Structure probing data (2A3 and DMS) for a 170-nucleotide construct. As a SHAPE reagent, 2A3 marks flexible, mostly unpaired nucleotides at the ribose 2'-OH. The DMS profile rests on 5,712 reads. For 2A3 the reverse transcriptase was SuperScript II with manganese. Reactivities are given for positions 27 through 129.
[RMDB]
RNA sequence: GGGAACGACUCGAGUAGAGUCGAAAACCUCAGUGCUCUUACUCUUUUCUGUAAAGAGGAGACUGCUGGACUCUCCGCCCAAGCCGAGAUGGGCCUCAGUUCCGAGCGAAGAGCCGAACCGGGAAGAUUAGACAGCGCUUCGGCGCUGUCAAAAGAAACAACAACAACAAC
Reactivity to 2A3 in 0.01 (KOAc 150mM, MgCl2 10mM, bicine 150mM(pH8.5), 24C), signal-to-noise 2, nucleotides 027 to 129: c000c010u020c000a010g040u040g030c020u010c010u050u200a300c010u080c000u020u090u070u040c100u170g200u300a010a020a000g010a000g020g000a000g000a000c000u010g020c040u000g000g000a000c000u000c020u000c060c010g030c000c000c000a020a010g000c000c000g000a050g020a020u000g000g000g000c000c000u040c000a040g000u000u000c010c030g000a000g010c000g000a000a010g020a000g000c070c050g000a000a000c010c000g000g000g040a000a000g000a020u070u080a030
Reactivity to DMS in 0.01 (KOAc 150mM, MgCl2 10mM, bicine 150mM(pH8.5), 24C), signal-to-noise 1, nucleotides 027 to 129: c060c050u010c050a010g010u000g020c180u010c050u010u040a170c070u040c040u000u000u000u000c150u060g050u100a000a040a040g160a030g060g000a040g020a050c000u000g020c000u020g000g020a000c060u000c140u070c040c050g090c010c000c030a080a210g030c000c030g010a020g000a030u030g000g020g040c050c020u040c050a130g000u010u010c000c030g000a090g040c080g040a080a100g020a170g020c150c160g000a000a030c000c000g000g030g000a040a050g020a070u000u050a060